[RMDB]
RNA sequence: GGGAACGACUCGAGUAGAGUCGAAAAACUAUCAUUGUCCUGGGCAUGGGAGUGCUCUGCUGAUAGUAGCCAAUGAAUGAAGGUCUGGGUUUCCAUGGAAACGUGAGUUUGAAGGAACUGGGACAAAUCAUGAUUAGGGUUUCGACCCUAAUCAUGAAAAAGAAACAACAACAACAAC
Reactivity to 2A3 in 0.01 (KOAc 150mM, MgCl2 10mM, bicine 150mM(pH8.5), 24C), signal-to-noise 4, nucleotides 027 to 126: a000c010u030a020u040c010a060u050u190g070u150c010c050u040g000g020g000c010a020u040g090g020g060a100g030u030g000c000u000c010u030g040c020u010g000a010u010a030g030u020a010g060c020c020a080a120u160g110a100a100u100g070a180a030g150g010u020c050u090g070g050g000u030u040u000c020c010a060u100g030g260a030a030a010c030g040u050g050a070g030u020u070u070g030a040a020g000g000a010a020c020u040g060g000g000a010c000a030a090a030
Reactivity to DMS in 0.01 (KOAc 150mM, MgCl2 10mM, bicine 150mM(pH8.5), 24C), signal-to-noise 6, nucleotides 027 to 126: a060c010u010a020u010c020a040u000u000g000u020c110c080u010g010g000g010c010a020u000g010g050g000a210g010u000g010c010u000c010u000g010c070u000g010a030u000a010g010u000a120g020c020c030a100a080u010g010a100a090u010g010a150a100g010g010u000c010u010g010g010g010u000u010u000c010c010a080u000g020g000a040a010a010c030g010u010g000a140g010u000u000u000g010a190a130g000g010a020a010c020u000g000g000g000a040c040a060a080a120